[RMDB]
RNA sequence: GGGAACGACUCGAGUAGAGUCGAAAAGAUAUGGAAGCCAUACCUUCUAGCUGAUGACCAUGUUUAAAUAUGUAUCGGAAACGAUACGAGGUAAACAUGCAAGGCUAGAAGGUGGCUUCCUAAGUCAGUUAAUUCUGGUGUUCGCACCAGAAUUAACAAAAGAAACAACAACAACAAC
Reactivity to DMS in 0.01 (KOAc 150mM, MgCl2 10mM, bicine 150mM(pH8.5), 24C), signal-to-noise 2, nucleotides 027 to 126: g060a060u000a300u000g000g000a070a020g030c000c000a030u000a100c000c000u000u010c000u000a010g000c000u000g010a100u010g020a140c300c000a000u000g000u000u000u000a000a040a090u000a240u030g010u000a000u000c010g000g000a170a090a140c000g020a000u000a010c010g010a110g000g000u000a000a010a030c000a010u000g000c010a060a080g010g020c000u000a010g000a000a000g010g000u000g000g000c010u000u000c000c000u000a000a020g000u000c050a130
Reactivity to 2A3 in 0.01 (KOAc 150mM, MgCl2 10mM, bicine 150mM(pH8.5), 24C), signal-to-noise 2, nucleotides 027 to 126: g000a010u070a060u230g010g000a020a000g000c000c000a050u210a250c070c030u010u030c010u010a010g000c000u010g050a300u170g030a120c090c020a010u020g010u000u020u020a210a230a110u300a210u300g010u000a000u000c020g060g000a150a040a060c030g010a010u010a020c010g000a040g170g140u060a000a010a000c010a000u000g000c020a120a200g000g000c010u030a010g060a000a000g000g000u000g010g000c020u000u020c000c000u010a000a010g040u000c070a020
Overview:
This 177-nucleotide RNA was probed chemically with DMS and 2A3. Reactivities are given for positions 27 through 126. Conditions: 150 mM KOAc, 10 mM MgCl2 and 150 mM bicine (pH 8.5), 24 C. 2A3 adducts were read by reverse transcription with SuperScript II with manganese. It was measured as part of the RMDB library TTRINS.